[RMDB]
RNA sequence: GGGAACGACUCGAGUAGAGUCGAAAAGUUCUCGAGGGCCUUCCUUCUGCGGUGAUCCUCCCUCUCCUUGUCGGUGAACCCGCUCUUGUGAGGCCUCUUCCCAGGUCCGGAGUCGACCUCCAUCUGAUGCGAGGACUGUUCGCAGUCCUCAAAAGAAACAACAACAACAAC
Reactivity to DMS in 0.01 (KOAc 150mM, MgCl2 10mM, bicine 150mM(pH8.5), 24C), signal-to-noise 4, nucleotides 027 to 129: g000u060u000c000u000c020g030a040g000g040g000c030c030u020u030c000c000u010u030c070u020g000c090g030g030u000g020a200u000c050c020u040c040c040c020u000c020u030c040c050u000u000g020u000c070g000g000u030g050a110a150c140c010c020g030c040u010c000u020u020g030u030g000a080g000g000c020c010u010c070u030u020c000c030c020a080g000g000u000c050c090g000g000a000g000u000c010g030a080c030c000u000c030c060a070u000c090u000g030a140u050g000c140
Reactivity to 2A3 in 0.01 (KOAc 150mM, MgCl2 10mM, bicine 150mM(pH8.5), 24C), signal-to-noise 8, nucleotides 027 to 129: g000u020u000c010u020c020g020a110g010g030g060c010c000u050u020c040c000u040u060c060u090g050c030g000g040u070g060a130u050c010c010u040c010c010c010u060c020u050c020c040u100u130g130u140c050g010g020u060g040a070a080c010c000c000g030c010u020c020u030u100g040u040g010a010g000g020c000c000u000c010u000u000c000c000c000a010g000g040u000c020c070g020g010a010g030u020c020g040a090c000c000u010c010c000a110u040c040u120g060a070u140g080c070